[RMDB]
RNA sequence: GGGAACGACUCGAGUAGAGUCGAAAAUGCAAAGGUUCCUUAAAAAAGGUUUCAAACUUGCAUUUAAACUACUACAAACGAAGAAAUAACAAUGAAGAUGACCAGGGAAACAUGACGUACAGUAAUGGCGUGAAUAUGUCUUCGGACAUAUUCACGCAAAAGAAACAACAACAACAAC
Reactivity to DMS in 0.01 (KOAc 150mM, MgCl2 10mM, bicine 150mM(pH8.5), 24C), signal-to-noise 1, nucleotides 027 to 126: u000g000c000a000a000a110g030g000u020u010c000c000u050u030a000a080a150a120a040a000g000g000u010u030u000c200a010a050a210c140u000u000g000c000a000u000u090u020a040a070a170c060u010a070c060u070a050c110a070a030a080c060g010a110a090g000a040a020a050u040a060a030c020a070a080u040g010a120a040g030a030u020g000a020c050c020a070g020g000g000a070a080a000c170a010u090g000a000c070g000u000a010c060a060g000u030a030a080u050g050
Reactivity to 2A3 in 0.01 (KOAc 150mM, MgCl2 10mM, bicine 150mM(pH8.5), 24C), signal-to-noise 2, nucleotides 027 to 126: u000g000c000a000a000a010g070g000u000u080c000c030u010u000a220a030a000a000a000a000g010g000u030u070u100c080a070a100a000c000u060u040g040c000a030u010u000u040a030a020a030c000u280a070c000u070a070c000a060a130a040c120g030a120a010g130a100a180a010u110a100a060c150a110a050u110g020a180a030g020a040u060g060a060c010c000a030g000g000g080a000a060a000c040a040u060g000a000c010g030u010a090c040a130g020u180a130a030u020g090